[RMDB]
RNA sequence: GGGAACGACUCGAGUAGAGUCGAAAAAGGAGCGUUGCAUCACCAUCAAGUCAACGUGAGCUCCCUGUGCCCUCUGUACCCAGGCAGGGAGGUGCUGGCCUGGCAGCUGGAGGCCACUGGGCCAGGACAGGGUAGGCUAGUUCGCUAGCCUACCCUGAAAAGAAACAACAACAACAAC
Reactivity to DMS in 0.01 (KOAc 150mM, MgCl2 10mM, bicine 150mM(pH8.5), 24C), signal-to-noise 2, nucleotides 027 to 126: a040g000g000a200g020c020g010u000u010g000c110a130u010c110a120c140c130a120u000c150a070a120g010u010c030a010a030c070g030u010g010a150g010c010u000c000c010c010u010g030u010g020c090c000c020u020c070u000g010u010a150c030c010c020a110g000g000c030a020g000g020g010a040g050g010u000g000c000u000g010g010c020c000u000g010g010c040a090g000c000u030g000g020a100g020g010c010c040a080c060u010g010g000g010c030c020a020g000g010a150
Reactivity to 2A3 in 0.01 (KOAc 150mM, MgCl2 10mM, bicine 150mM(pH8.5), 24C), signal-to-noise 2, nucleotides 027 to 126: a000g130g040a070g000c020g010u030u030g060c040a090u120c050a040c060c010a080u170c100a110a110g130u070c010a010a020c020g030u050g090a120g070c020u020c010c010c010u000g010u070g080c010c040c000u030c060u100g130u140a150c050c010c000a010g050g050c010a000g000g040g030a080g000g010u040g050c000u010g000g020c000c010u050g010g000c010a030g000c010u090g100g130a100g060g170c010c040a000c010u070g010g040g010c000c000a000g030g000a010

Source: RMDB library OK2TST, as collected in RNAgym. An RNA of 177 nucleotides, treated with DMS and 2A3 and read out base by base. The reactions ran in a buffer of 150 mM KOAc, 10 mM MgCl2 and 150 mM bicine (pH 8.5), at 24 C.